Overview: This 177-nucleotide RNA was probed chemically with 2A3 and DMS. In probing experiments dimethyl sulfate is read out at A N1 and C N3, which are open when not base-paired. Reactivities are given for positions 27 through 126. For 2A3 the reverse transcriptase was SuperScript II with manganese. Conditions: 150 mM KOAc, 10 mM MgCl2 and 150 mM bicine (pH 8.5), 24 C. The 2A3 profile rests on 17,343 reads.
RNA sequence: GGGAACGACUCGAGUAGAGUCGAAAAGAUAUGGAACGAUGUAGGGAGACCCACGUCGGAAACGACGUGAAGGUCAUCGAUCUAUAUCGUUCCUAAGUCGCAAAAGACGCUGCUUCGGCAGCGUCAACGAUCACAUUAUGUUCGCAUAAUGUGAUCGAAAAGAAACAACAACAACAAC
Reactivity to 2A3 in 0.01 (KOAc 150mM, MgCl2 10mM, bicine 150mM(pH8.5), 24C), signal-to-noise 4, nucleotides 027 to 126: g010a000u000a000u040g000g000a000a000c010g010a000u010g010u020a010g030g090g100a300g010a070c010c010c000a000c000g010u000c000g010g000a010a000a000c010g000a010c000g000u010g030a070a030g030g010u000c000a020u270c120g020a020u000c000u000a000u000a000u020c010g000u000u000c000c000u010a000a000g010u010c010g010c110a040a100a070a200g010a010c000g000c000u010g000c010u070u110c300g130g000c000a000g010c000g010u000c000a000a000
Reactivity to DMS in 0.01 (KOAc 150mM, MgCl2 10mM, bicine 150mM(pH8.5), 24C), signal-to-noise 5, nucleotides 027 to 126: g000a030u010a110u020g000g010a020a030c010g010a010u000g020u000a010g000g010g010a220g010a030c000c010c000a010c000g010u010c010g010g000a010a020a070c000g010a010c000g030u010g000a130a130g030g010u000c010a140u000c300g000a110u010c000u000a010u000a010u000c000g010u000u000c000c000u000a010a060g000u000c010g020c300a070a070a120a130g010a010c000g030c000u000g000c000u010u010c220g040g000c000a010g010c000g010u000c000a020a100